[RMDB]
RNA sequence: GGGAACGACUCGAGUAGAGUCGAAAAAUCGUCAAGAUGCUAAGAGGCAAGCUAAAGAAGCUGGGUGCUAUCAAUACAGACAUAGAAAUCGGGAGAAAGGAUUGCCUAGACAUGCUUAACACCGUUGAAGGACUGUCAGAAGAGCAAAGGAGGAACAUAGGAUAGCUGAAUUCGUUCAGCUAUCCUAAAAAGAAACAACAACAACAAC
Reactivity to 2A3 in 0.01 (KOAc 150mM, MgCl2 10mM, bicine 150mM(pH8.5), 24C), signal-to-noise 4, nucleotides 027 to 156: a000u070c020g080u050c050a050a020g020a080u060g040c020u060a080a050g010a000g030g000c030a010a030g010c040u140a200a060a040g070a050a010g030c040u080g010g000g030u090g000c050u030a020u140c000a010a030u060a120c030a020g120a020c020a030u140a040g090a020a110a040u140c070g000g000g030a040g020a060a020a010g030g020a090u070u080g000c000c010u030a020g000a010c010a010u120g040c000u060u040a080a030c050a060c090c020g020u020u060g040a030a020g010g030a060c020u010g030u040c020a000g030a100a010g000a090g020c030a020a050a020g020g020a030g000g020a020a000c010a070
Reactivity to DMS in 0.01 (KOAc 150mM, MgCl2 10mM, bicine 150mM(pH8.5), 24C), signal-to-noise 3, nucleotides 027 to 156: a080u000c060g030u000c050a080a110g010a110u000g010c030u000a090a080g010a190g020g000c030a060a040g000c040u000a060a080a130g010a060a080g040c030u000g010g010g080u000g020c040u010a100u000c040a040a110u000a140c070a120g010a070c050a070u000a140g000a040a080a110u010c040g020g040g000a070g000a070a060a110g020g000a080u010u000g040c030c010u010a100g010a080c040a090u010g020c050u000u010a020a090c030a090c020c020g010u010u000g000a070a080g020g000a070c060u000g010u010c060a110g000a060a080g010a120g060c050a020a050a090g000g000a050g000g030a070a040c080a180
The record gives the reactivity of an RNA of 207 nucleotides to 2A3 and DMS. DMS adducts were read by reverse transcription with MarathonRT. The DMS profile rests on 4,692 reads.